[RMDB]
The record gives the reactivity of an RNA of 207 nucleotides to DMS and 2A3.

RNA sequence: GGGAACGACUCGAGUAGAGUCGAAAAUGAAAGUACGCUGGGUCGACAGGACAGGCACAGGGAGAGCACUGAAGCGCGCACGGUGCUCGAAGAACUGUGUAUUGGUCCUGCGACCUGUGCUGAAGCGCGCACGGCAACCGAAAGGUGCGGACAUCAACUUAGACAUUGAGUUCGCUCAAUGUCUAAGAAAAGAAACAACAACAACAAC
Reactivity to DMS in 0.01 (KOAc 150mM, MgCl2 10mM, bicine 150mM(pH8.5), 24C), signal-to-noise 1, nucleotides 027 to 156: u000g000a150a260a150g000u000a010c010g050c030u000g000g020g000u000c030g000a210c030a010g000g000a030c020a130g020g010c000a030c010a060g000g010g070a060g010a030g040c010a010c040u010g000a070a100g000c000g030c010g040c030a300c020g030g030u000g020c010u000c000g000a110a120g040a070a180c020u000g020u030g010u000a110u000u010g040g010u000c030c010u000g000c020g000a000c020c000u000g000u000g030c020u030g010a000a010g000c000g010c020g020c030a300c160g000g010c000a030a100c010c060g000a120a130a120g040g020u000g020c000g010g000a100c060a120u010c050a110a150
Reactivity to 2A3 in 0.01 (KOAc 150mM, MgCl2 10mM, bicine 150mM(pH8.5), 24C), signal-to-noise 2, nucleotides 027 to 156: u110g020a020a040a040g040u040a020c010g010c000u020g000g010g000u010c010g060a290c020a000g000g010a000c000a010g010g000c010a000c000a010g000g000g000a010g000a010g000c000a010c010u030g040a190a040g020c000g000c010g000c000a000c000g010g000u000g010c000u000c000g040a070a010g010a000a000c000u000g020u010g020u060a300u110u180g190g000u000c000c000u010g000c000g000a000c000c000u010g000u000g000c010u000g000a120a030g010c000g000c000g000c000a020c020g010g000c000a000a000c010c000g050a100a050a020g010g000u000g020c010g000g000a000c010a050u160c020a000a030